[RMDB]
RNA sequence: GGGAACGACUCGAGUAGAGUCGAAAAGCAAAGAAUCGGAGCUAAAAACCUGUAUCGCAUGAUGCGAGGUUAUGCAAACGGCGGUCAAGUAGGAAGCGUGACAACUGGCGGCGCUGGCAUCAAUCGCGGUGCAUCGCAAUUUGCAUUUGGUGAUAUCAACUAUGAAUCAAUUCGUUGAUUCAUAGUUAAAAGAAACAACAACAACAAC
Reactivity to DMS in 0.01 (KOAc 150mM, MgCl2 10mM, bicine 150mM(pH8.5), 24C), signal-to-noise 4, nucleotides 027 to 156: g010c040a060a070a100g010a110a060u000c050g010g000a130g040c040u000a040a070a080a080a050c010c020u000g010u000a060u000c030g040c070a160u020g020a080u000g000c020g020a060g030g020u000u000a050u000g020c040a040a040a050c080g020g020c050g020g020u010c010a050a070g020u000a110g020g010a090a130g020c020g020u000g010a090c060a050a080c070u000g020g020c000g000g000c040g010c010u000g000g000c020a050u000c050a050a080u000c090g020c030g000g040u000g020c030a050u000c050g020c030a050a080u000u000u000g010c000a140u000u000u000g000g020u000g010a100u000a120u010c070
Reactivity to 2A3 in 0.01 (KOAc 150mM, MgCl2 10mM, bicine 150mM(pH8.5), 24C), signal-to-noise 9, nucleotides 027 to 156: g030c030a070a070a040g050a060a040u120c080g040g040a040g020c050u130a080a030a010a040a070c010c020u030g020u040a030u010c020g020c170a090u240g020a030u040g050c050g050a020g040g000u080u050a020u090g000c010a050a020a040c030g050g000c010g010g010u040c040a090a050g030u030a050g120g090a070a010g010c040g040u040g050a040c030a080a030c090u070g070g010c030g000g000c030g020c040u040g050g010c000a000u030c040a070a140u120c090g010c050g030g010u020g010c010a010u040c030g000c040a050a130u020u040u130g020c030a040u040u030u110g070g010u060g030a040u030a040u160c030
Notes:
Chemical mapping of a 207-nucleotide RNA with DMS and 2A3. Conditions: 150 mM KOAc, 10 mM MgCl2 and 150 mM bicine (pH 8.5), 24 C. For DMS, 14,137 sequencing reads were counted. For 2A3, 11,930 sequencing reads were counted. 2A3 adducts were read by reverse transcription with SuperScript II with manganese. DMS adducts were read by reverse transcription with MarathonRT.